[RMDB]
The record gives the reactivity of an RNA of 177 nucleotides to DMS and 2A3. For DMS the reverse transcriptase was MarathonRT. It was measured as part of the RMDB library OK2TRN. The reactions ran in a buffer of 150 mM KOAc, 10 mM MgCl2 and 150 mM bicine (pH 8.5), at 24 C.

RNA sequence: GGGAACGACUCGAGUAGAGUCGAAAAGCCGGCCGGCAGGCCCAGGGCGUUGUCGGCGGUAGGCAGGUUGUUCGGUACAUAUGCCACCGGAUCGCCGUAACUCAAAUCCAGGGCGGUGGCGGCGCCGACUCCAUCAUGGAUUCGUCCAUGAUGGAGUAAAAGAAACAACAACAACAAC
Reactivity to DMS in 0.01 (KOAc 150mM, MgCl2 10mM, bicine 150mM(pH8.5), 24C), signal-to-noise 3, nucleotides 027 to 126: g000c000c000g040g030c010c000g010g000c030a040g010g000c010c020c140a110g020g010g020c050g020u000u000g020u000c010g020g000c000g010g020u010a050g000g000c050a140g010g010u010u000g000u000u000c040g010g010u010a080c130a100u010a140u010g000c010c030a030c020c010g010g000a050u000c070g000c020c030g000u000a060a090c140u010c150a070a110a140u000c080c060a180g000g000g010c020g000g010u010g010g000c000g010g000c070g020c020c020g000
Reactivity to 2A3 in 0.01 (KOAc 150mM, MgCl2 10mM, bicine 150mM(pH8.5), 24C), signal-to-noise 3, nucleotides 027 to 126: g000c010c030g070g260c010c000g000g000c000a020g020g010c030c030c030a080g130g110g010c100g100u090u010g020u020c000g000g000c020g000g070u090a110g030g010c080a040g100g000u040u030g020u040u050c030g010g040u070a060c030a090u240a070u300g000c030c000a000c010c000g010g050a130u110c070g000c070c020g040u060a070a060c020u050c250a110a050a040u090c030c030a050g010g010g030c000g000g000u010g000g000c030g030g000c040g000c000c020g020
Description: DMS (dimethyl sulfate) methylates the pairing face of unpaired adenines and cytosines.